[RMDB]
RNA sequence: GGGAACGACUCGAGUAGAGUCGAAAAACGCUCUUCGGAGCGUAAGUAUUCCUAAGUCAUUCUCUAGCGUGUUGCUGUGAAGUUGAGCACUCGGAAACGAGUGCAAUGAUGUGGAGCAAUCGGGAUGAUAUGGAUGAUAAUUCCUUUCGAGGAAUAAUUUAGUUCACGUUUUCGAACGUGAACUAAAAAAAGAAACAACAACAACAAC
Reactivity to 2A3 in 0.01 (KOAc 150mM, MgCl2 10mM, bicine 150mM(pH8.5), 24C), signal-to-noise 3, nucleotides 027 to 156: a000c000g020c000u030c000u040u060c290g260g010a000g000c010g020u010a000a040g000u010a130u030u060c020c020u020a060a100g010u020c020a040u100u040c070u030c080u110a040g120c040g080u190g000u130u020g030c010u000g030u050g130a120a050g040u070u010g010a010g030c010a000c000u000c000g000g070a060a130a070c030g000a030g000u000g000c020a010a030u110g010a050u110g030u110g060g200a040g010c020a020a040u000c000g020g030g000a020u050g020a030u070a070u160g070g010a020u040g010a010u060a220a060u100u010c000c000u040u070u120c270g060a040g040g010a060a070u160a050a060
Reactivity to DMS in 0.01 (KOAc 150mM, MgCl2 10mM, bicine 150mM(pH8.5), 24C), signal-to-noise 2, nucleotides 027 to 156: a020c000g010c010u000c010u000u000c300g020g000a040g000c010g010u000a000a120g000u010a080u000u000c030c010u010a060a120g010u000c020a010u000u010c000u000c010u010a180g050c130g040u020g000u010u010g040c000u000g010u010g000a070a280g000u000u000g000a300g010c030a000c000u000c000g010g000a140a070a300c020g010a020g030u000g040c000a010a080u000g000a090u000g020u010g030g020a130g010c090a070a060u000c040g000g010g030a130u000g020a080u020a150u000g080g000a050u000g010a110u000a070a070u000u000c000c000u000u000u000c190g010a030g040g000a020a040u010a030a190